Background: An RNA of 177 nucleotides, treated with DMS and 2A3 and read out base by base. The reactions ran in a buffer of 150 mM KOAc, 10 mM MgCl2 and 150 mM bicine (pH 8.5), at 24 C. It was measured as part of the RMDB library OK1LIB.
[RMDB]
RNA sequence: GGGAACGACUCGAGUAGAGUCGAAAAUUUAAAGGAUUGUUCUUAAUCAAUUUCAAAUUAUCUGGAAGGUCUUCAAACGGCCUUCUAUCCUUAUUCUUAGAAUAUUGAUUGAGUUCGUCAUAAGGAAGCCAUGAUAGUAGUUCGCUACUAUCAUGGCAAAAGAAACAACAACAACAAC
Reactivity to DMS in 0.01 (KOAc 150mM, MgCl2 10mM, bicine 150mM(pH8.5), 24C), signal-to-noise 1, nucleotides 027 to 126: u070u040u010a080a080a140g000g010a020u000u070g010u000u000c000u000u000a000a000u000c000a020a000u000u000u020c000a010a060a010u050u000a010u010c120u000g030g000a000a000g020g010u000c000u020u000c300a080a060a210c300g000g000c000c000u000u000c020u000a020u000c190c080u000u020a010u000u000c110u050u000a110g000a000a000u030a030u000u000g000a020u000u000g000a000g000u010u020c000g000u040c000a020u030a070a010g020g050a140a100
Reactivity to 2A3 in 0.01 (KOAc 150mM, MgCl2 10mM, bicine 150mM(pH8.5), 24C), signal-to-noise 4, nucleotides 027 to 126: u110u110u100a080a090a020g190g050a050u230u300g010u050u010c000u000u010a010a010u010c010a020a010u000u040u000c030a050a060a080u130u080a140u160c040u050g000g000a000a000g020g000u030c010u140u100c070a120a120a130c110g000g000c000c000u000u010c000u000a000u030c000c000u050u110a030u060u070c140u070u060a050g030a070a030u150a020u140u000g010a030u000u000g010a000g000u000u030c010g010u000c020a010u090a150a140g080g070a110a030